[RMDB]
RNA sequence: GGGAACGACUCGAGUAGAGUCGAAAACGCAGUGUUACCUGAACUCCUUCUGCUUCUUGGUUCCCUACUGAGGUAGGGAGAAACUGGAAACUCGCUGAGAUGCCGGGAACGAUACGGCCGGCGCGGCCGCAGGUUGCUAGUUCGCUAGCAACCUGCGAAAAGAAACAACAACAACAAC
Reactivity to 2A3 in 0.01 (KOAc 150mM, MgCl2 10mM, bicine 150mM(pH8.5), 24C), signal-to-noise 3, nucleotides 027 to 126: c050g010c040a040g020u010g030u180u100a120c000c010u000g040a060a040c020u020c010c000u040u130c030u050g030c000u050u030c010u020u050g040g000u050u030c000c000c000u010a010c020u030g130a120g120g060u020a000g010g040g000a020g050a040a090a020c030u030g050g000a020a060a040c050u050c030g000c020u050g030a060g000a190u090g010c000c000g020g030g050a100a070c060g010a050u110a240c050g060g070c050c000g040g000c030g000c030g040g060c000
Reactivity to DMS in 0.01 (KOAc 150mM, MgCl2 10mM, bicine 150mM(pH8.5), 24C), signal-to-noise 3, nucleotides 027 to 126: c090g000c060a070g030u000g020u000u010a080c020c010u000g010a080a170c070u000c030c020u000u000c050u010g010c040u000u000c010u000u000g000g020u010u000c000c000c000u010a020c010u000g010a120g020g000u000a010g010g000g020a030g000a050a080a070c040u000g010g020a050a060a100c050u000c100g000c020u000g010a090g010a150u010g020c120c020g000g000g000a070a070c080g020a190u020a060c060g020g000c020c010g020g010c040g020c040g010g020c060
Structure probing data (2A3 and DMS) for a 177-nucleotide construct.
The reactions ran in a buffer of 150 mM KOAc, 10 mM MgCl2 and 150 mM bicine (pH 8.5), at 24 C.
For 2A3, 3,402 sequencing reads were counted.
The DMS profile rests on 3,549 reads.